[RMDB]
RNA sequence: GGGAACGACUCGAGUAGAGUCGAAAAGAUAUGGAUACUGACCGAAGAACGUACAACGAAUUCGGAAACGAACUAUUGUACGGGAGGUCAAAAAGUAUCCUAAGUCAAACCGCAGUUCGCUGCGGAAUCGGACUACAUACUUCGGUAUGUAGUCCGAAAAAGAAACAACAACAACAAC
Reactivity to DMS in 0.01 (KOAc 150mM, MgCl2 10mM, bicine 150mM(pH8.5), 24C), signal-to-noise 1, nucleotides 027 to 126: g020a030u000a300u020g000g000a040u000a020c000u000g010a020c010c000g090a070a130g000a130a200c030g000u000a000c020a040a000c160g030a050a190u000u000c000g020g010a080a030a180c000g020a010a030c070u000a220u010u000g020u000a000c000g000g020g000a110g000g000u000c010a020a020a050a130a000g000u010a000u000c000c000u010a030a060g010u000c000a040a180a080c000c000g000c000a000g010u000u010c240g000c000u000g000c000g000g000a020a040
Reactivity to 2A3 in 0.01 (KOAc 150mM, MgCl2 10mM, bicine 150mM(pH8.5), 24C), signal-to-noise 1, nucleotides 027 to 126: g010a020u120a040u090g000g010a010u000a000c020u070g000a010c030c000g000a210a030g020a010a010c010g000u000a000c000a000a000c080g250a140a300u060u050c010g000g000a070a010a010c020g020a030a000c040u060a070u040u040g000u020a000c000g000g030g030a030g000g000u020c040a060a000a140a080a030g000u010a000u000c000c020u000a090a030g030u010c030a060a040a060c020c000g000c020a000g030u120u220c300g000c180u000g000c000g000g040a000a100
The data come from the RNA Mapping Database (RMDB), library TTRDEL. This 177-nucleotide RNA was probed chemically with DMS and 2A3. High DMS reactivity at an A or C suggests that its Watson-Crick edge is free. The reactions ran in a buffer of 150 mM KOAc, 10 mM MgCl2 and 150 mM bicine (pH 8.5), at 24 C.